[RMDB]
About this RNA: Structure probing data (DMS and 2A3) for a 177-nucleotide construct. Values cover nucleotides 27 to 126.

RNA sequence: GGGAACGACUCGAGUAGAGUCGAAAAAUCGUCUCCAGCAGGCCCUGGGCGUUUAACUGAAUCUGGUUCAUGCGAUCACCUCGCUGACCGGGAUACGGGCUGACAGAACGAGGACAAAACGGCUGGCCGGAAGAUUACAGUUCGCUGUAAUCUUCCGAAAAGAAACAACAACAACAAC
Reactivity to DMS in 0.01 (KOAc 150mM, MgCl2 10mM, bicine 150mM(pH8.5), 24C), signal-to-noise 4, nucleotides 027 to 126: a070u010c020g010u000c070u000c000c020a100g030c060a140g000g010c050c010c020u000g000g010g010c060g020u000u010u010a080a110c040u010g000a090a050u010c020u000g010g000u000u010c040a040u020g020c020g010a040u020c250a120c150c300u000c020g000c000u000g000a030c020c000g000g010g010a070u010a070c140g000g010g000c090u000g000a070c090a060g010a070a040c050g000a070g000g010a090c090a030a040a060a110c140g000g000c020u000g000g030c300
Reactivity to 2A3 in 0.01 (KOAc 150mM, MgCl2 10mM, bicine 150mM(pH8.5), 24C), signal-to-noise 2, nucleotides 027 to 126: a020u040c010g030u000c010u000c040c020a010g020c000a010g080g060c000c000c060u090g070g050g030c080g030u110u130u110a070a040c030u020g100a070a060u030c020u030g040g000u130u140c050a050u280g000c000g000a030u110c040a070c080c020u020c020g000c010u020g010a020c010c010g040g030g010a060u100a050c060g000g000g040c060u040g030a010c000a060g040a070a020c040g000a050g030g040a040c040a030a110a030a010c040g080g010c010u020g000g020c020